[RMDB]
Structure probing data (2A3) for a 207-nucleotide construct. The data come from the RNA Mapping Database (RMDB), library M2RFPK. Reactivities are given for positions 27 through 156.

RNA sequence: GGGAACGACUCGAGUAGAGUCGAAAACAGGAAACUGGUUAAUCGUUUUCCUUGGUAGUAUAGCGGAAACCAUAAAUAAGAACAACUCUAAGUGCUUGAGUAGAGUUAAAAUAAUUAGACAGGCAAUUAAGGUACUCCACGUUCGCGUGGAGUACAAUCACAGACAAUUCUUCGGAAUUGUCUGUGAAAAAGAAACAACAACAACAAC
Reactivity to 2A3 in 0.01 (KOAc 150mM, MgCl2 10mM, bicine 150mM(pH8.5), 24C), signal-to-noise 3, nucleotides 027 to 156: c030a010g100g000a040a030a090c060u100g040g030u130u130a120a090u180c050g010u020u030u070u070c000c030u020u040g100g000u010a100g000u050a070u120a140g040c050g000g020a040a080a020c020c000a050u080a110a130a020u180a110a050g110a100a060c040a000a010c000u010c000u000a050a050g010u050g300c000u010u000g000a000g000u020a010g000a000g010u100u180a010a010a000a000u110a000a000u290u000a000g000a010c000a000g000g000c020a000a030u160u170a120a090g090g000u000a000c000u000c000c010a010c010g020u030u070c200g010c000g070u010g020g000a000g000u000a000c000a000a000